[RMDB]
RNA sequence: GGGAACGACUCGAGUAGAGUCGAAAAAAUUGGGUUAAAACGGUGGGGGCCGAUCCCGUAACAUCCGUCCUAACGGCGACAGACUGCACGGCCCUGCCUCUUAGGUGUGUUCAAUGAACAGUCGUUCUGGCCCCUAAGGCGUUCGCGCCUUAGGGAAGAUCAAACUGUUAUUCGUAACAGUUUGAUCAAAAGAAACAACAACAACAAC
Reactivity to 2A3 in 0.01 (KOAc 150mM, MgCl2 10mM, bicine 150mM(pH8.5), 24C), signal-to-noise 3, nucleotides 027 to 156: a000a020u130u140g050g010g000u050u050a090a060a000a040c050g000g020u120g090g040g000g000g000c000c010g000a040u040c000c020c010g010u020a040a030c030a070u020c000c010g030u050c020c040u080a120a060c060g030g000c020g020a020c030a090g070a050c020u070g010c100a010c050g010g000c000c000c000u010g030c010c000u050c070u070u130a060g010g010u060g030u020g000u110u090c080a120a130u120g020a050a040c030a070g020u030c010g000u020u020c010u040g120g000c000c000c010c000u000a000a000g010g000c000g020u010u040c130g010c000g000c060c010u000u000a000g000g000g000a000a020
Reactivity to DMS in 0.01 (KOAc 150mM, MgCl2 10mM, bicine 150mM(pH8.5), 24C), signal-to-noise 1, nucleotides 027 to 156: a120a080u010u000g000g020g000u010u010a070a050a060a060c030g000g000u010g030g020g010g020g040c040c060g000a110u000c040c070c030g010u000a060a060c090a090u000c010c020g010u010c030c030u000a160a150c180g010g010c030g000a040c050a030g050a110c040u000g010c090a160c050g020g000c020c060c010u000g010c000c010u000c050u000u020a100g010g030u000g020u000g010u000u000c070a110a110u000g020a080a050c050a050g000u000c040g010u020u010c020u000g030g010c040c000c000c010u010a000a000g000g020c000g060u000u020c300g010c020g020c010c000u000u000a010g000g000g000a010a010
An RNA of 207 nucleotides, treated with 2A3 and DMS and read out base by base.
For 2A3, 2,600 sequencing reads were counted.
For DMS the reverse transcriptase was MarathonRT.
2A3 is a SHAPE reagent: it acylates the 2'-hydroxyl of flexible nucleotides of all four kinds.
The reactions ran in a buffer of 150 mM KOAc, 10 mM MgCl2 and 150 mM bicine (pH 8.5), at 24 C.